[RMDB]
RNA sequence: GGGAACGACUCGAGUAGAGUCGAAAACUCGAAUCUUUCGAGAUUCGAGACUCUCGAAGUGUCAAUAAGAUCGAAUAGAUCGCCGAGCAUAAAAUAGACACAAUGCUGCUUGAUUCGUCAAGCAGAAUACAUCGCGAGAAUUCGUUCUCGCGAUGUAAAAAGAAACAACAACAACAAC
Reactivity to 2A3 in 0.01 (KOAc 150mM, MgCl2 10mM, bicine 150mM(pH8.5), 24C), signal-to-noise 1, nucleotides 027 to 126: c000u000c000g000a010a030u000c000u000u180u220c190g080a050g030a060u010u000c010g010a000g020a020c030u000c000u010c060g090a300a040g000u010g040u000c030a020a130u070a200a050g010a020u050c000g000a130a170u160a160g020a000u010c010g030c000c020g060a050g090c020a140u150a090a110a090a050u150a060g030a010c000a010c010a020a120u150g040c000u000g000c000u020u030g010a000u060u000c180g000u010c150a010a010g000c000a000g000a000a000
Reactivity to DMS in 0.01 (KOAc 150mM, MgCl2 10mM, bicine 150mM(pH8.5), 24C), signal-to-noise 2, nucleotides 027 to 126: c000u010c000g000a010a000u000c030u000u000u000c080g020a000g000a030u000u000c000g000a050g020a080c110u000c000u000c010g010a160a070g050u020g000u000c010a090a140u000a110a100g000a010u020c010g010a110a100u020a220g000a010u000c000g050c180c040g000a090g040c300a050u010a000a010a030a070u010a090g000a000c010a040c020a180a140u010g000c000u000g000c010u000u000g000a030u000u010c170g010u000c000a000a000g000c010a000g010a070a070
Source information
An RNA of 177 nucleotides, treated with 2A3 and DMS and read out base by base. The RNA was probed in 150 mM KOAc, 10 mM MgCl2 and 150 mM bicine (pH 8.5) at 24 C. Source: RMDB library M2PK50, as collected in RNAgym. For 2A3 the reverse transcriptase was SuperScript II with manganese. The DMS profile rests on 970 reads.